[RMDB]
RNA sequence: GGGAACGACUCGAGUAGAGUCGAAAACAUUUAGUGAUAAAUAUGAAUGGUUACUAGAGUUCUUUCCAUUUUUAGAUCCUCAGCAUUUUGUUUUUUGUGGUAGAAAAAACAUCGUUAAAGCUGAUUACGCGCUAAGUGUUUUCGAACACUUAGCGCGAAAAGAAACAACAACAACAAC
Reactivity to 2A3 in 0.01 (KOAc 150mM, MgCl2 10mM, bicine 150mM(pH8.5), 24C), signal-to-noise 2, nucleotides 027 to 126: c000a070u140u080u110a030g000u000g030a130u060a140a300a050u180a110u080g080a110a000u020g020g060u110u020a010c070u080a110g070a020g270u170u060c000u060u030u000c000c000a000u080u000u000u090u170a120g010a130u090c000c000u000c000a000g000c000a010u000u090u090u020g010u000u000u050u000u000u000g150u150g090g280u160a190g220a010a000a000a000a000a000c000a000u020c070g110u170u290a000a130a000g020c020u000g000a000u060u020a080
The record gives the reactivity of an RNA of 177 nucleotides to 2A3. The 2A3 profile rests on 361 reads.